[RMDB]
RNA sequence: GGGAACGACUCGAGUAGAGUCGAAAAGAUAUGGAUGGUUGCGACGAUCUAUAAGGGUCGGAAACGACCCAUAGGGAGCAACGUCCUAAGUCAAACAUUUUCGGUGUCUUCGGACACCGAAAAUGAACAAAGCGAGAUUGUUCGCAAUCUCGCUUUGAAAAGAAACAACAACAACAAC
Reactivity to DMS in 0.01 (KOAc 150mM, MgCl2 10mM, bicine 150mM(pH8.5), 24C), signal-to-noise 2, nucleotides 027 to 126: g020a020u010a300u000g010g000a010u010g020g030u010u010g000c000g000a090c220g020a000u000c020u010a010u000a100a100g010g010g000u000c010g010g010a050a080a200c020g030a010c000c000c010a030u010a020g020g000g010a030g000c030a010a020c010g000u000c020c000u000a020a110g000u000c040a120a100a290c010a010u000u000u000u000c000g000g010u000g000u000c000u010u000c220g010g000a000c000a000c000c000g000a000a000a010a020u000g010a070a160
Reactivity to 2A3 in 0.01 (KOAc 150mM, MgCl2 10mM, bicine 150mM(pH8.5), 24C), signal-to-noise 1, nucleotides 027 to 126: g030a030u070a020u160g040g010a010u050g300g090u000u020g000c040g100a210c000g000a300u030c020u000a040u070a300a300g030g000g010u040c030g030g010a010a080a020c000g000a000c000c000c040a000u000a000g000g000g010a030g020c020a000a000c010g020u000c010c000u010a110a020g070u020c020a080a090a110c010a040u010u000u010u010c000g000g000u000g000u000c000u010u120c300g090g000a000c020a000c000c010g000a000a000a000a000u010g000a010a000